Chemical mapping of a 177-nucleotide RNA with 2A3 and DMS. For DMS, 3,335 sequencing reads were counted. Values cover nucleotides 27 to 126. The reactions ran in a buffer of 150 mM KOAc, 10 mM MgCl2 and 150 mM bicine (pH 8.5), at 24 C. 2A3 adducts were read by reverse transcription with SuperScript II with manganese. For 2A3, 1,757 sequencing reads were counted.

[RMDB]
RNA sequence: GGGAACGACUCGAGUAGAGUCGAAAAGCUGCCUCUGACGUCCUUAAGGGUGGUAAAGCGGGUCUCCCCCGGAAACGGGGCCGCGCCUGGCGCUUGCACGGGUAUGCGUGGAGGUCGACCCUGGCCGACGUCACGGUAAUUUCGAUUACCGUGACGUAAAAGAAACAACAACAACAAC
Reactivity to 2A3 in 0.01 (KOAc 150mM, MgCl2 10mM, bicine 150mM(pH8.5), 24C), signal-to-noise 1, nucleotides 027 to 126: g000c010u020g060c030c000u000c050u060g120a020c000g040u080c000c000u100u100a080a060g030g020g020u050g000g060u070a140a030a030g000c020g070g010g010u020c110u050c070c010c000c000c000g010g010a020a030a000c000g030g000g000g000c020c000g000c000g020c000c000u040g100g010c050g000c080u080u140g040c090a040c110g100g040g070u170a080u260g010c010g000u040g000g110a040g050g020u060c080g090a160c000c000c030u010g000g060c000c010g060
Reactivity to DMS in 0.01 (KOAc 150mM, MgCl2 10mM, bicine 150mM(pH8.5), 24C), signal-to-noise 3, nucleotides 027 to 126: g010c040u000g020c020c010u000c040u000g000a030c040g000u000c020c010u000u010a190a180g020g010g010u010g020g010u000a020a080a130g020c010g000g000g000u000c090u020c180c020c000c020c010g010g000a050a070a130c010g020g010g020g020c010c030g010c080g000c060c020u000g010g020c020g010c070u000u010g000c070a080c300g000g020g020u000a060u000g010c020g030u000g000g020a030g000g010u000c050g000a060c040c000c020u000g010g010c020c120g020